[RMDB]
RNA sequence: GGGAACGACUCGAGUAGAGUCGAAAAGGAGGCAAGUUCGCUUGCCUCCAAAGAAGCUCAAAUUGACGCAAACAUCCGCGUCAUCGCGAGCAAGCGUGGAAAAAACCGUGAACUUCGGUUCACGGAAUCAUUGUGAAUUCUUCGGAAUUCACAAUGAAAAAGAAACAACAACAACAAC
Reactivity to DMS in 0.01 (KOAc 150mM, MgCl2 10mM, bicine 150mM(pH8.5), 24C), signal-to-noise 5, nucleotides 027 to 126: g000g000a020g020g030c000a010a010g020u000u000c250g020c000u000u000g000c000c000u010c000c000a000a030a060g010a110a110g010c010u000c010a050a260a070u010u010g010a010c000g020c000a100a120a150c260a120u020c190c110g010c010g000u000c000a000u000c130g010c300g000a010g000c010a050a130g000c100g030u000g000g020a000a070a080a080a100a050c010c010g020u000g000a010a010c010u000u010c190g030g010u000u000c000a010c010g010g000a010a040
Reactivity to 2A3 in 0.01 (KOAc 150mM, MgCl2 10mM, bicine 150mM(pH8.5), 24C), signal-to-noise 2, nucleotides 027 to 126: g020g000a010g000g010c000a000a000g020u040u040c060g030c050u000u000g000c000c010u000c020c000a000a010a000g010a010a010g000c020u000c000a000a090a190u050u030g010a000c000g020c030a050a300a300c100a300u130c210c100g000c010g020u000c000a000u010c030g000c040g030a010g000c000a000a050g060c040g080u220g020g000a080a120a010a020a000a030c000c000g010u000g010a000a000c000u030u090c210g050g000u000u000c000a000c000g010g000a000a000
Conditions: 150 mM KOAc, 10 mM MgCl2 and 150 mM bicine (pH 8.5), 24 C. This 177-nucleotide RNA was probed chemically with DMS and 2A3. Reactivities are given for positions 27 through 126. The data come from the RNA Mapping Database (RMDB), library M2PK50.